RNA sequence: GGGAACGACUCGAGUAGAGUCGAAAAACCUUUGUGAGAGUGAUAGUGAGGUGCCAGAAGCACGUAACAUCUGGCUCCCAUUGGGAGCCAGUGGUGCUUCGGUAAUUCCUCACGUCACUCUCACUCUGGUAAAGAACCGUACUUCGGUACGGUUCAACGAGACUAAACAGUUCGCUGUUUAGUCUCGAAAAGAAACAACAACAACAAC
Reactivity to 2A3 in 0.01 (KOAc 150mM, MgCl2 10mM, bicine 150mM(pH8.5), 24C), signal-to-noise 2, nucleotides 027 to 156: a000c000c000u000u000u020g000u000g000a000g000a010g000u000g020a000u230a300g010u000g000a040g030g000u020g020c020c060a130g110a020a010g020c020a010c020g040u110a080a050c050a080u060c010u000g010g010c030u000c030c000c140a300u240u300g020g000g000a000g030c000c020a000g000u000g000g010u000g000c020u000u010c020g000g010u020a020a010u120u030c010c000u000c000a000c000g000u000c000a000c000u010c000u000c000a000c000u000c000u000g000g000u060a030a000a130g000a000a000c000c000g000u000a010c000u040u080c300g080g000u010a000c000g020g000u000u000c000a010a000
This 207-nucleotide RNA was probed chemically with 2A3. The RNA was probed in 150 mM KOAc, 10 mM MgCl2 and 150 mM bicine (pH 8.5) at 24 C. Reactivities are given for positions 27 through 156. The data come from the RNA Mapping Database (RMDB), library RNAMAK.